[RMDB]
RNA sequence: GGGAACGACUCGAGUAGAGUCGAAAAGAUAUGGAACGGUUGACAUGCUCGACCAUCGGAAACGAUGGGUCGAGCAACAGCAAUUUCCUAAGUCAAAUCGGCCAAAACGUUCGCGUUUUGGCCGAAAGCAAAACUAACUGUUCGCAGUUAGUUUUGCAAAAGAAACAACAACAACAAC
Reactivity to DMS in 0.01 (KOAc 150mM, MgCl2 10mM, bicine 150mM(pH8.5), 24C), signal-to-noise 1, nucleotides 027 to 126: g000a020u000a300u000g000g000a010a030c300g000g010u010u000g000a130c290a180u000g020c000u000c000g000a060c000c000a000u000c010g010g010a120a000a070c000g020a010u000g030g030g000u020c000g000a010g000c000a000a030c040a040g060c020a020a020u030u000u000c020c000u000a020a070g040u000c040a050a040a110u000c010g000g040c000c010a000a000a000a000c000g020u000u000c300g010c030g000u000u000u000u000g000g030c000c010g000a000a020a030
This 177-nucleotide RNA was probed chemically with DMS. For DMS, 598 sequencing reads were counted. The data come from the RNA Mapping Database (RMDB), library TTRDEL. The RNA was probed in 150 mM KOAc, 10 mM MgCl2 and 150 mM bicine (pH 8.5) at 24 C. DMS adducts were read by reverse transcription with MarathonRT.